[RMDB]
RNA sequence: GGGAACGACUCGAGUAGAGUCGAAAAAAGGAAGCCUGGCCGGUGAUGCGGACAGCGCAGCAGAUUGCUGCUCACGAGCGCACGACACAGACGCUGAAGCAGGCAGAGGAGCUGCGCCUGACGCAGCCCCGAUACUGAGUUUCGACUCAGUAUCGGGAAAAGAAACAACAACAACAAC
Reactivity to DMS in 0.01 (KOAc 150mM, MgCl2 10mM, bicine 150mM(pH8.5), 24C), signal-to-noise 6, nucleotides 027 to 126: a070a040g010g000a090a080g000c060c010u000g010g010c020c000g000g010u030g000a090u010g010c000g000g010a150c300a140g010c040g020c000a020g000c000a090g010a290u060u010g010c000u010g010c000u000c120a120c150g020a050g000c020g020c090a090c140g000a150c160a090c190a100g030a180c040g010c020u010g010a090a050g010c050a070g010g000c020a040g000a090g010g000a170g000c000u000g010c000g000c020c020u020g010a300c010g000c010a040g010c070
Reactivity to 2A3 in 0.01 (KOAc 150mM, MgCl2 10mM, bicine 150mM(pH8.5), 24C), signal-to-noise 7, nucleotides 027 to 126: a000a010g140g010a080a010g030c020c010u030g030g010c010c020g030g010u070g030a080u050g010c020g020g010a060c020a000g000c000g000c020a000g000c000a000g020a230u120u170g030c020u010g000c000u010c020a130c110g110a030g010c010g000c040a050c120g220a030c080a020c030a100g180a100c020g000c020u030g030a050a010g010c040a030g230g000c010a000g040a060g100g060a040g010c000u010g000c010g020c010c040u070g010a020c010g000c010a020g000c000